[RMDB]
The record gives the reactivity of an RNA of 207 nucleotides to 2A3.
Source: RMDB library M2RFPK, as collected in RNAgym.
RNA sequence: GGGAACGACUCGAGUAGAGUCGAAAAAGAUCCACACUACGGCGUGGAUCACACGUUCAUCCCUAUUGGGACGGAAGUAGGCAUAGUGCCGAAGGAACGCAUUAGUCAUGCGCUACGGCGCAUGACACACAUCAGAGUCACUUCGGUGACUCUGAAACCAGCAAACUGAGUUCGCUCAGUUUGCUGGAAAAGAAACAACAACAACAAC
Reactivity to 2A3 in 0.01 (KOAc 150mM, MgCl2 10mM, bicine 150mM(pH8.5), 24C), signal-to-noise 2, nucleotides 027 to 156: a000g020a020u010c000c000a000c000a000c030u090a120c220g120g020c070g040u010g000g010a000u000c000a030c000a000c010g000u010u020c010a030u090c030c000c010u100a300u110u300g030g000g010a020c010g010g010a020a000g010u000a000g000g000c010a090u160a300g120u070g210c030c000g010a000a000g050g050a000a040c090g000c030a110u110u030a020g000u000c000a000u000g000c000g000c000u000a020c300g090g000c040g010c010a000u000g000a000c000a000c000a000c000a050u070c000a010g000a000g000u000c000a000c000u010u040c120g160g000u000g000a000c000u000c000u000g000a000a000a010